[RMDB]
RNA sequence: GGGAACGACUCGAGUAGAGUCGAAAAUCAGCUUGAUGGUAGUGUAUUGGCCUACCAUGGCGUUAACGGGUAACGGAGAAUUAGGGUUCGAUUCCGGAGAGGGAGCCUGAGAGACGGCUACCACAUCCGAUAGGGUGGUCUUCGGACCACCCUAUCGAAAAGAAACAACAACAACAAC
Reactivity to DMS in 0.01 (KOAc 150mM, MgCl2 10mM, bicine 150mM(pH8.5), 24C), signal-to-noise 3, nucleotides 027 to 126: u020c060a180g010c020u010u020g000a030u020g020g000u020a020g010u040g010u000a140u030u000g000g030c030c000u000a040c000c010a010u000g020g030c020g020u000u010a080a160c100g010g000g000u000a050a130c060g010g010a070g010a050a140u030u010a100g000g000g040u020u010c060g000a160u010u010c060c030g010g000a120g000a170g010g010g000a080g010c020c010u010g000a160g000a120g000a090c190g000g000c010u000a040c010c000a080c140a100u020c040
Reactivity to 2A3 in 0.01 (KOAc 150mM, MgCl2 10mM, bicine 150mM(pH8.5), 24C), signal-to-noise 4, nucleotides 027 to 126: u070c000a050g030c010u110u220g090a020u030g080g000u030a020g010u030g050u210a220u160u300g110g030c000c000u010a000c000c000a020u030g000g000c060g030u030u040a060a000c040g020g020g010u000a060a020c020g100g040a020g060a160a100u140u090a110g050g010g020u080u100c080g040a050u160u000c030c000g000g000a080g020a070g020g020g000a000g000c030c000u020g010a040g000a020g030a030c110g010g000c000u050a120c020c010a040c000a100u070c030

Structure probing data (DMS and 2A3) for a 177-nucleotide construct. DMS adducts were read by reverse transcription with MarathonRT. Conditions: 150 mM KOAc, 10 mM MgCl2 and 150 mM bicine (pH 8.5), 24 C. Values cover nucleotides 27 to 126. Source: RMDB libraries RFM100 and RFMREP, as collected in RNAgym.